[RMDB]
RNA sequence: GGGAACGACUCGAGUAGAGUCGAAAAGGUGAGCUGGACGGGAAGUAGAUCCAGCGACUGCAUCCGAAGCUUUGAUAAGAGCAACUCCAUCUACGUUGCUCAAGUAGGUGGUAGCAGCAAACACCGAAGGCACUAGUGAGUUCGCUCACUAGUGCCUAAAAGAAACAACAACAACAAC
Reactivity to 2A3 in 0.01 (KOAc 150mM, MgCl2 10mM, bicine 150mM(pH8.5), 24C), signal-to-noise 2, nucleotides 027 to 126: g010g000u000g020a030g000c000u000g000g000a000c090g060g170g040a160a020g050u220a010g000a170u030c000c000a000g000c000g000a070c000u000g000c000a060u020c000c010g040a100a000g000c020u090u250u190g060a050u100a090a120g000a000g050c000a010a010c000u040c150c030a300u070c100u070a040c070g150u050u030g000c030u070c000a030a020g030u030a050g000g140u160g090g050u050a130g020c000a000g040c070a020a020a020c000a000c000c000g020a020
Reactivity to DMS in 0.01 (KOAc 150mM, MgCl2 10mM, bicine 150mM(pH8.5), 24C), signal-to-noise 2, nucleotides 027 to 126: g000g000u000g020a080g000c000u000g000g000a010c050g060g000g090a060a300g000u000a230g000a180u000c000c000a030g000c020g000a080c000u020g000c010a130u000c000c100g000a220a180g000c020u000u000u090g050a240u040a170a110g000a000g000c020a030a070c090u040c290c080a010u080c130u160a160c250g000u000u000g000c080u030c000a010a070g050u000a020g000g030u000g030g010u000a270g010c000a000g000c000a060a010a230c030a000c000c000g030a060

Structure probing data (2A3 and DMS) for a 177-nucleotide construct. For 2A3 the reverse transcriptase was SuperScript II with manganese. The RNA was probed in 150 mM KOAc, 10 mM MgCl2 and 150 mM bicine (pH 8.5) at 24 C. Source: RMDB library OK1LIB, as collected in RNAgym. DMS adducts were read by reverse transcription with MarathonRT.